The data come from the RNA Mapping Database (RMDB), library M2PK90. This 177-nucleotide RNA was probed chemically with DMS and 2A3. DMS adducts were read by reverse transcription with MarathonRT. Reactivities are rounded to 0.1 and cut off at 0 and 3. Values cover nucleotides 27 to 126. The RNA was probed in 150 mM KOAc, 10 mM MgCl2 and 150 mM bicine (pH 8.5) at 24 C. 2A3 adducts were read by reverse transcription with SuperScript II with manganese. High DMS reactivity at an A or C suggests that its Watson-Crick edge is free.

RNA sequence: GGGAACGACUCGAGUAGAGUCGAAAAUUAAAGUACGUAGAAGCGGCGUGAAGCAUGUAGAAAGCUUUGCGAGGAUAUCGAGCUACAUGUGAGCGAAAGCGGUUACGUACAACGAUAUGCAAAAAAACUCAUUCAGAUGGUUCGCCAUCUGAAUGAGAAAAGAAACAACAACAACAAC
Reactivity to DMS in 0.01 (KOAc 150mM, MgCl2 10mM, bicine 150mM(pH8.5), 24C), signal-to-noise 1, nucleotides 027 to 126: u000u010a000a080a020g000u000a010c010g030u000a000g020a140a100g000c000g000g020c010g020u000g010a100a150g000c000a000u000g020u010a040g000a160a150a150g040c090u010u000u010g030c000g020a090g030g050a090u020a060u000c060g010a160g000c020u010a000c020a020u000g000u000g000a300g000c000g000a000a070a150g020c000g000g020u000u000a030c000g000u000a000c000a120a090c200g000a040u000a050u020g020c030a000a000a060a090a060a080a130
Reactivity to 2A3 in 0.01 (KOAc 150mM, MgCl2 10mM, bicine 150mM(pH8.5), 24C), signal-to-noise 2, nucleotides 027 to 126: u040u040a070a060a000g020u000a000c010g000u000a000g030a110a000g010c000g090g010c000g000u010g060a040a000g000c000a010u010g000u050a030g030a210a160a010g070c060u220u150u150g100c060g010a000g070g030a050u060a040u200c010g000a000g030c020u010a020c000a000u030g100u170g040a040g000c010g070a050a100a050g000c000g030g010u050u010a000c010g000u020a000c010a000a020c000g020a050u010a070u300g040c120a000a000a020a000a000a000a080